[RMDB]
RNA sequence: GGGAACGACUCGAGUAGAGUCGAAAAUCAAAGGUGCUUGAGUCAUUGGCAUGUAAGAUAAAUAUACCUGCAUGUUAGUCUUAGGUUCUGAUAGAAAUGACAUGCAAUUAUGCUGCCAUUUUUUACUUGAUACCCUCGAAUUCGUUCGAGGGUAUCAAAAAGAAACAACAACAACAAC
Reactivity to DMS in 0.01 (KOAc 150mM, MgCl2 10mM, bicine 150mM(pH8.5), 24C), signal-to-noise 1, nucleotides 027 to 126: u040c070a010a100a120g020g000u010g010c030u010u010g010a000g000u000c090a030u010u020g000g000c000a000u000g000u030a000a090g040a070u000a120a200a100u040a080u110a020c210c000u000g000c050a020u000g000u000u000a000g000u000c010u000u000a020g000g000u000u000c040u130g010a050u000a050g010a000a000a000u000g040a070c000a050u020g000c030a150a070u040u080a090u010g030c000u000g000c020c000a020u000u000u000u030u000u000a150c130u030
Reactivity to 2A3 in 0.01 (KOAc 150mM, MgCl2 10mM, bicine 150mM(pH8.5), 24C), signal-to-noise 3, nucleotides 027 to 126: u090c060a040a020a070g100g000u030g000c020u030u010g000a030g000u010c020a060u070u100g010g000c000a000u010g000u010a100a060g040a090u150a080a240a000u260a010u030a070c000c000u000g000c000a010u000g020u020u030a030g010u000c000u020u050a030g030g080u030u070c040u050g060a100u070a190g060a010a050a000u010g010a010c010a000u210g000c010a020a090u190u210a180u260g000c010u030g030c000c000a000u020u000u000u000u030u050a100c050u020